[RMDB]
RNA sequence: GGGAACGACUCGAGUAGAGUCGAAAAGCCGCGGCAAGUGGAGUUAGCGGGAAGAGACUAGGCUUUGGUUUCUUCAAGUGAAGCGGUCACCAAUCAGGUGUGGUAGUUACCGUAAAAAAUCCGGAUUAAUGCCUCAGCGCGUUCGCGCGCUGAGGAAGGUGACAAUACUGUUCGCAGUAUUGUCACCAAAAGAAACAACAACAACAAC
Reactivity to 2A3 in 0.01 (KOAc 150mM, MgCl2 10mM, bicine 150mM(pH8.5), 24C), signal-to-noise 1, nucleotides 027 to 156: g010c010c010g030c010g010g000c060a130a050g070u130g090g030a070g020u080u090a030g010c040g050g030g040a020a000g040a020g010a000c010u050a040g110g200c100u150u170u170g010g000u000u010u010c000u000u000c000a100a020g020u050g000a140a000g010c000g030g050u040c040a030c060c000a070a140u140c110a020g070g040u080g020u040g120g080u010a060g040u040u130a020c010c040g010u100a140a070a000a070a000a000u000c050c000g040g000a010u040u230a160a040u230g010c000c000u000c000a000g000c000g000c000g030u040u040c110g010c000g000c000g000c110u010g000a000g010g000a000a000
An RNA of 207 nucleotides, treated with 2A3 and read out base by base. For 2A3, 642 sequencing reads were counted. Source: RMDB library M2RFPK, as collected in RNAgym. The RNA was probed in 150 mM KOAc, 10 mM MgCl2 and 150 mM bicine (pH 8.5) at 24 C. 2A3 adducts were read by reverse transcription with SuperScript II with manganese. Reactivities are given for positions 27 through 156.